[RMDB]
RNA sequence: GGGAACGACUCGAGUAGAGUCGAAAACAGCAAUUAUUCGUAAUUGCUGAAUGGCGGACCCAGCGCGGAAGGAGCGCGCAGGACUCCUUGGCCGCCUUUUAAUAAGCAGGUACUUCGGUACCUGCAAGCAUUGCAGAAGUUUCGACUUCUGCAAUGCAAAAGAAACAACAACAACAAC
Reactivity to DMS in 0.01 (KOAc 150mM, MgCl2 10mM, bicine 150mM(pH8.5), 24C), signal-to-noise 1, nucleotides 027 to 126: c000a000g000c010a020a000u000u000a060u010u010c190g010u000a000a000u000u010g000c000u000g000a080a010u010g000g000c020g010g000a190c140c010c040a120g030c030g020c020g020g000a100a170g000g000a110g030c020g010c100g000c040a080g000g010a090c180u010c040c000u000u000g010g010c030c010g010c010c020u000u010u010u020a070a120u000a020a130g010c000a000g000g000u000a010c000u000u020c080g030g000u010a000c000c010u010g010c000a010a020
Reactivity to 2A3 in 0.01 (KOAc 150mM, MgCl2 10mM, bicine 150mM(pH8.5), 24C), signal-to-noise 1, nucleotides 027 to 126: c000a000g000c010a020a000u000u030a030u060u210c200g050u080a010a000u020u010g000c010u000g000a010a110u100g000g000c000g000g030a110c000c030c010a010g000c020g000c000g000g080a150a120g070g080a130g130c040g000c000g000c020a000g090g070a080c030u060c030c010u050u020g000g040c020c000g000c010c000u040u230u010u010a100a130u180a090a020g020c010a010g000g000u000a000c010u000u080c210g080g000u000a000c020c000u010g000c000a000a000